[RMDB]
RNA sequence: GGGAACGACUCGAGUAGAGUCGAAAAACAAAUAAAAAGCAAGAAGUAUAUGAUGUGAGUGAUAAUACAUAAUGAAAUGACCCAACAAGAGGGAAAGGAAGUUACAUGCCUUCACUACAGUCAUACAUAGCUACACUCCAUUCGUGGAGUGUAGCUAAAAAGAAACAACAACAACAAC
Reactivity to DMS in 0.01 (KOAc 150mM, MgCl2 10mM, bicine 150mM(pH8.5), 24C), signal-to-noise 1, nucleotides 027 to 126: a080c300a090a080a130u000a090a120a100a060a000g000c100a100a100g000a290a040g020u050a220u000a000u000g000a000u000g010u000g000a040g140u000g040a030u000a000a130u000a000c250a300u020a000a060u000g030a110a140a090u000g000a200c000c000c030a020a000c270a060a190g010a040g020g000g000a100a100a000g000g000a170a150g000u060u030a010c080a000u000g040c040c090u000u000c000a020c000u000a050c000a050g000u000c000a150u000a090c130a060
Reactivity to 2A3 in 0.01 (KOAc 150mM, MgCl2 10mM, bicine 150mM(pH8.5), 24C), signal-to-noise 1, nucleotides 027 to 126: a010c030a000a060a020u300a000a150a040a000a000g150c300a020a000g000a160a000g020u070a140u000a000u290g000a000u000g110u000g100a030g000u000g040a040u060a200a060u090a150c000a030u040a060a000u020g070a070a160a000u020g000a000c000c000c000a000a070c030a020a070g050a110g120g030g000a090a080a000g000g020a120a120g000u130u160a040c000a020u090g300c000c030u000u030c000a000c000u050a000c000a000g000u000c000a000u000a000c100a000
This 177-nucleotide RNA was probed chemically with DMS and 2A3. The 2A3 profile rests on 762 reads. For 2A3 the reverse transcriptase was SuperScript II with manganese. Reactivities are given for positions 27 through 126. It was measured as part of the RMDB library OK1LIB.